[RMDB]
Chemical mapping of a 177-nucleotide RNA with DMS. Values cover nucleotides 27 to 126. Conditions: 150 mM KOAc, 10 mM MgCl2 and 150 mM bicine (pH 8.5), 24 C. Source: RMDB library RFMREP, as collected in RNAgym.
RNA sequence: GGGAACGACUCGAGUAGAGUCGAAAAUAUAGCGGCACGUGGCAAAGGUGCUGCGAUGCGCCGCGUUAAAUCGUAUCACAGUUCUUUGUCACCUUUUGCUUCACAAAAACUGCGUCUUCGGACGCAGGUAAACUCCGAACUUCGGUUCGGAGUUUACAAAAGAAACAACAACAACAAC
Reactivity to DMS in 0.01 (KOAc 150mM, MgCl2 10mM, bicine 150mM(pH8.5), 24C), signal-to-noise 1, nucleotides 027 to 126: u060a250u000a100g030c050g000g030c080a010c290g030u000g020g000c010a030a010a000g000g010u050g000c000u010g020c020g000a000u000g000c000g030c170c040g090c180g000u000u010a040a130a070u010c020g010u020a020u000c020a060c010a010g010u010u000c010u000u000u000g000u000c000a020c020c060u000u000u000u000g000c100u000u000c170a170c260a080a010a070a060a300c020u000g000c020g030u000c000u010u000c200g000g000a010c000g030c000a010g030